[RMDB]
RNA sequence: GGGAACGACUCGAGUAGAGUCGAAAACGCACCUUCCAAGAUGUUAAGGAAAUAAUUAUUCAUUGCUAGUGAGAGAGAGAAGGAGUUGUAGGCGUCUAGCGCACCUCGAGGUUGCUGAGAAGAUGACAACCUCGACGCGUGCUCAUACCGCAACUUCCUGGUACUAUUGCUUCGGCAAUAGUACCAGAAAAGAAACAACAACAACAAC
Reactivity to DMS in 0.01 (KOAc 150mM, MgCl2 10mM, bicine 150mM(pH8.5), 24C), signal-to-noise 1, nucleotides 027 to 156: c130g070c070a030c000c070u000u000c160c080a090a100g040a070u000g010u010u020a020a100g000g000a050a130a090u000a070a110u000u000a190u000u000c050a130u010u000g010c000u000a100g060u000g000a120g020a130g000a050g010a090g010a010a110g000g000a040g030u000u020g020u000a020g070g010c060g000u000c100u000a120g030c070g050c030a000c030c260u000c000g020a010g020g010u000u000g050c010u010g040a220g010a070a180g000a100u010g000a030c000a000a020c000c000u000c020g020a010c040g000c020g070u010g030c000u010c020a060u000a000c060c000g010c030a020a050c010u000u000c010
Reactivity to 2A3 in 0.01 (KOAc 150mM, MgCl2 10mM, bicine 150mM(pH8.5), 24C), signal-to-noise 3, nucleotides 027 to 156: c070g010c010a060c000c020u020u020c050c010a080a080g040a160u070g050u160u160a060a080g050g120a100a080a060u210a050a070u200u180a080u150u080c070a020u020u080g040c000u060a040g010u070g060a050g000a000g000a000g010a000g020a090a030g030g030a020g010u040u010g040u090a150g030g020c010g020u000c090u090a040g020c020g010c030a010c000c070u000c000g000a000g000g000u010u020g000c050u060g070a000g050a260a080g100a130u180g040a080c000a000a000c000c000u000c000g010a020c070g010c040g000u010g010c010u030c020a050u120a080c030c020g020c050a020a020c000u060u040c000